[RMDB]
RNA sequence: GGGAACGACUCGAGUAGAGUCGAAAAAGAGCUUUGCGAGACCUACCAAGGGUGAAGAGAUACCAUCCAAGGAGCUGAAGGGAAAUCUCACUUUAGACGCCUGGGGAACUCGGACUAAAUUAAAAAAAAAACAUCAACCCGUUCGCGGGUUGAUGAACUUUAGGUAAUUGUUCGCAAUUACCUAAAGAAAAGAAACAACAACAACAAC
Reactivity to 2A3 in 0.01 (KOAc 150mM, MgCl2 10mM, bicine 150mM(pH8.5), 24C), signal-to-noise 1, nucleotides 027 to 156: a000g050a000g000c070u110u020u020g040c110g020a030g040a110c000c000u020a080c050c070a030a070g080g020g040u100g070a040a070g040a040g010a070u050a200c050c000a040u030c000c010a100a020g030g030a020g020c070u020g020a050a030g060g000g000a000a150a110u120c090u010c020a080c010u060u070u010a140g020a200c060g090c000c030u030g000g060g010g000a080a110c000u000c040g020g020a030c090u180a040a130a300u300u190a040a090a020a000a000a000a000a000a000a020c000a000u020c000a000a000c000c000c000g030u040u030c110g000c000g100g020g010u000u000g000a000u020g000a010a010